[RMDB]
RNA sequence: GGGAACGACUCGAGUAGAGUCGAAAAUGACGUUAAACUGCUGACUCAUAGAUACUGACACCGGUUGCUCAACAGGCUGUGUGGGACAAUAGAAUAACAAGGCUGUCAAUUUGAGCUUGACGGCUGCAAAACCUGCAGUACUUCGGUACUGCAGGAAGAUCUUCAGUUGGUUCGCCAACUGAAGAUCAAAAGAAACAACAACAACAAC
Reactivity to 2A3 in 0.01 (KOAc 150mM, MgCl2 10mM, bicine 150mM(pH8.5), 24C), signal-to-noise 2, nucleotides 027 to 156: u080g030a020c020g020u040u080a040a050a110c030u070g000c020u050g040a090c000u000c030a020u070a110g010a030u120a150c070u100g050a020c000a030c100c040g080g000u060u080g000c020u020c060a040a070c000a080g090g000c050u030g020u000g000u000g090g020g050a000c040a040a070u050a090g130a060a070u040a080a000c050a110a040g050g000c000u000g000u010c010a000a010u000u060u190g040a040g060c000u010u000g000a010c000g010g000c000u000g000c030a010a080a060a150c000c000u000g000c000a010g000u000a000c000u000u040c110g040g010u000a000c010u000g000c000a000g010g000a000a000
Chemical mapping of a 207-nucleotide RNA with 2A3. Values cover nucleotides 27 to 156. 2A3 adducts were read by reverse transcription with SuperScript II with manganese. The RNA was probed in 150 mM KOAc, 10 mM MgCl2 and 150 mM bicine (pH 8.5) at 24 C.